[RMDB]
RNA sequence: GGGAACGACUCGAGUAGAGUCGAAAAACGUAGUAAUUUGGUAUUCAUAAAAAGACCUUAACAUACCGUGUAGCUAAUAACACAGUGCAAUGUAUUGUCCUGUAUAUUUCAAUACCUUCAUCUCCGUUAUUCAAAUACGCAUAAGGUAAAUCUGCAACAUAAUGCGGUCCUUCGGGACCGCAUUAUGAAAAGAAACAACAACAACAAC
Reactivity to 2A3 in 0.01 (KOAc 150mM, MgCl2 10mM, bicine 150mM(pH8.5), 24C), signal-to-noise 1, nucleotides 027 to 156: a000c040g000u040a010g000u020a000a300u120u090u090g070g000u090a000u140u190c070a040u190a110a060a130a000a000g010a080c010c000u000u140a100a000c000a090u030a010c060c000g030u000g000u060a060g000c070u060a070a020u060a140a040c000a000c000a020g010u030g060c010a100a080u070g000u090a030u170u000g040u140c010c060u100g160u130a040u030a030u070u230u020c000a000a000u000a000c000c000u000u070c040a070u010c030u000c060c000g020u030u020a100u230u100c040a020a100a000u140a020c030g010c160a020u030a190a010g010g130u100a010a150a070u150c030u270g070c060a110a000